[RMDB]
RNA sequence: GGGAACGACUCGAGUAGAGUCGAAAAGUGCUGAUUGAAAUUCAUGGGAGCCUCUCCAUAAUGGAUGAACGCCGCGUUAGUGCGCGCAGUCGCGACGUAAACGCUCUGUUUUCCCGUUCAGGCCUCAAUCGUACCAUAUAUUCGUAUAUGGUACGAUAAAAGAAACAACAACAACAAC
Reactivity to 2A3 in 0.01 (KOAc 150mM, MgCl2 10mM, bicine 150mM(pH8.5), 24C), signal-to-noise 9, nucleotides 027 to 126: g070u060g020c030u020g040a210u180u090g040a130a120a070u110u070c050a050u070g020g000g030a040g040c040c030u100c010u000c030c000a050u200a240a070u170g020g020a010u050g030a060a020c030g020c040c010g000c000g030u030u070a100g030u090g140c030g000c010g010c030a010g110u140c060g000c010g030a060c020g030u050a050a090a020c020g010c020u030c010u030g050u040u040u020u020c000c000c010g000u080u070c040a040g020g050c000c020u050c040a020
Reactivity to DMS in 0.01 (KOAc 150mM, MgCl2 10mM, bicine 150mM(pH8.5), 24C), signal-to-noise 9, nucleotides 027 to 126: g020u000g010c020u000g010a120u010u000g010a080a120a070u000u000c050a050u010g010g010g010a070g010c090c060u000c070u000c010c020a100u010a090a070u000g000g010a040u000g010a090a060c050g020c040c040g010c020g010u000u000a120g020u010g010c050g010c090g010c080a090g000u010c050g010c010g010a040c040g010u000a060a080a100c110g010c020u000c040u000g010u000u000u000u000c010c010c020g010u000u010c110a070g010g010c040c080u000c130a090
This 177-nucleotide RNA was probed chemically with 2A3 and DMS. Source: RMDB library OK2TRN, as collected in RNAgym.